[RMDB]
RNA sequence: GGGAACGACUCGAGUAGAGUCGAAAACCCCAUCUAGCAGAGCCCCGGACCCCCUUCCAAAGAGACCGGAGGGGGUGACUAGGAACACCGGGGACAGGUCGGGUCCGUGGGAUGCUUUUCCCGAUUCGUAAAGUAGAAUGUUCGCAUUCUACUUUACAAAAGAAACAACAACAACAAC
Reactivity to 2A3 in 0.01 (KOAc 150mM, MgCl2 10mM, bicine 150mM(pH8.5), 24C), signal-to-noise 1, nucleotides 027 to 126: c000c000c000c020a010u020c020u050a000g040c100a070g100a100g150c020c010c010c030g030g010a020c010c000c010c010c010u070u000c040c010a090a110a030g220a080g080a110c040c090g000g020a020g040g030g010g010g000u000g010a020c010u050a030g060g040a120a040c050a020c030c000g030g040g000g000a000c000a020g030g000u050c020g040g000g040u030c050c040g040u050g020g000g050a050u060g040c040u100u000u020u040c010c000c010g010a090u100u100c060
Reactivity to DMS in 0.01 (KOAc 150mM, MgCl2 10mM, bicine 150mM(pH8.5), 24C), signal-to-noise 3, nucleotides 027 to 126: c080c000c020c130a070u000c060u010a060g000c060a120g000a200g010c010c000c000c020g020g000a150c000c000c000c000c000u000u000c020c030a080a140a220g010a200g010a100c300c170g000g010a040g000g020g020g020g010u000g000a060c090u010a070g010g020a130a080c150a120c010c010g010g010g000g000a040c030a010g010g020u000c050g000g010g010u000c010c040g020u010g000g000g000a040u000g000c080u000u000u000u000c000c000c000g010a150u000u000c130

The record gives the reactivity of an RNA of 177 nucleotides to 2A3 and DMS. The 2A3 profile rests on 1,561 reads. It was measured as part of the RMDB library VIROID. The RNA was probed in 150 mM KOAc, 10 mM MgCl2 and 150 mM bicine (pH 8.5) at 24 C. 2A3 adducts were read by reverse transcription with SuperScript II with manganese.